[RMDB]
RNA sequence: GGGAACGACUCGAGUAGAGUCGAAAACGAUGUAGAGUUCAAAGACGCAGUAGGUUCUGGCGGGAACUCCACAGAAACGGGUUCCAGUGGGCUUACCGUUACCUUCAAUUUUAUAACUUCAAAUUCACAUUACCAUACAAUUCGUUGUAUGGUAAUGAAAAGAAACAACAACAACAAC
Reactivity to 2A3 in 0.01 (KOAc 150mM, MgCl2 10mM, bicine 150mM(pH8.5), 24C), signal-to-noise 9, nucleotides 027 to 126: c030g010a020u110g040u130a050g010a030g070u050u080c070a080a080a030g050a030c030g010c100a040g020u040a010g020g050u150u240c040u090g130g030c040g010g000g010a000a000c010u020c060c010a090c020a060g250a040a110a020c080g010g010g000u020u000c000c000a010g030u050g000g010g000c000u010u020a010c000c000g030u020u030a050c010c000u040u100c040a080a100u060u050u110u100a170u060a080a070c030u090u080c090a070a110a250u130u090c050a030
Reactivity to DMS in 0.01 (KOAc 150mM, MgCl2 10mM, bicine 150mM(pH8.5), 24C), signal-to-noise 9, nucleotides 027 to 126: c100g010a110u000g010u000a050g010a040g010u000u000c110a060a080a080g010a100c140g020c060a050g010u000a040g010g010u000u010c030u010g020g030c030g000g010g000a020a020c010u000c000c070a080c110a150g010a060a110a110c260g000g000g010u000u000c010c010a070g020u000g010g000g000c030u000u000a040c020c020g010u000u000a100c090c020u000u000c200a040a040u000u000u000u010a060u010a060a120c110u010u010c090a050a070a170u010u000c100a140